Chemical mapping of a 170-nucleotide RNA with 2A3 and DMS. The data come from the RNA Mapping Database (RMDB), library 15KLIB. 2A3 adducts were read by reverse transcription with SuperScript II with manganese. The 2A3 profile rests on 5,259 reads. For DMS the reverse transcriptase was MarathonRT. Values cover nucleotides 27 to 129. As a SHAPE reagent, 2A3 marks flexible, mostly unpaired nucleotides at the ribose 2'-OH.
RNA sequence: GGGAACGACUCGAGUAGAGUCGAAAACAUCUUCGGAGUGGGGGCGGCGGCGUCUGGUCUCUUAUUUCUUCCUUCUGAGAAGAGGAGACAGCUUGCCGCUCGCCCCCAGACCCGAGAUGAGCCUCGUCCACCUUACGCUUCGGCGUAAGGAAAAGAAACAACAACAACAAC
Reactivity to 2A3 in 0.01 (KOAc 150mM, MgCl2 10mM, bicine 150mM(pH8.5), 24C), signal-to-noise 3, nucleotides 027 to 129: c020a020u000c000u240u130c000g010g000a030g030u030g000g030g000g020g000c000g000g000c000g000g000c000g020u050c050u030g120g070u000c010u030c000u010u090a200u080u050u070c020u030u040c060c000u100u190c040u090g120a190g000a150a000g030a030g000g000a020g000a010c000a000g000c030u050u110g000c000c000g000c010u000c000g000c000c000c000c020c000a000g000a000c000c000c000g000a000g000a000u030g000a000g010c010c030u040c040g030u000c000c010a060
Reactivity to DMS in 0.01 (KOAc 150mM, MgCl2 10mM, bicine 150mM(pH8.5), 24C), signal-to-noise 2, nucleotides 027 to 129: c000a000u010c020u030u030c180g050g000a200g000u030g040g010g020g040g000c030g040g000c000g020g020c000g060u000c020u000g000g000u030c000u010c000u050u020a130u080u030u030c010u000u000c020c060u060u050c200u050g030a140g000a000a010g000a010g020g000a000g000a050c030a000g000c110u000u000g050c000c000g000c060u050c010g000c000c000c000c000c000a010g010a040c020c000c000g020a050g020a020u000g020a150g000c000c000u000c100g020u000c020c090a200